RNA sequence: GGGAACGACUCGAGUAGAGUCGAAAAGUUUACGCUCCUAGAUCGGUGGAUAGCAGCCCUAUCAAUAUCUAGGAGAACUGUGCUAUGUUUAGAAGAUUAGGUAGUCUCUAAACAGAACAAUUUACCUCAUACGUUAGGACGUUCGCGUCCUAACGAAGGCUAAGUUAAGCUUCGGCUUAACUUAGCCAAAAGAAACAACAACAACAAC
Reactivity to 2A3 in 0.01 (KOAc 150mM, MgCl2 10mM, bicine 150mM(pH8.5), 24C), signal-to-noise 2, nucleotides 027 to 156: g020u000u080u070a040c050g010c040u000c000c000u000a010g000a010u030c130g140g180u090g150g030a030u050a060g060c090a060g000c030c010c000u000a000u000c010a030a070u010a000u190c000u000a000g000g000a000g040a020a010c010u040g030u020g080c030u040a000u080g010u000u000u000a090g010a300a040g000a030u040u050a020g070g040u060a040g030u000c010u000c000u000a000a030a000c020a020g010a080a020c110a040a040u070u050u020a020c010c000u030c060a080u090a170c010g000u000u000a000g000g010a010c010g000u010u020c250g000c000g040u000c000c000u000a000a000c000g000a010a050
An RNA of 207 nucleotides, treated with 2A3 and read out base by base. It was measured as part of the RMDB library M2RFPK. Values cover nucleotides 27 to 156. The reactions ran in a buffer of 150 mM KOAc, 10 mM MgCl2 and 150 mM bicine (pH 8.5), at 24 C.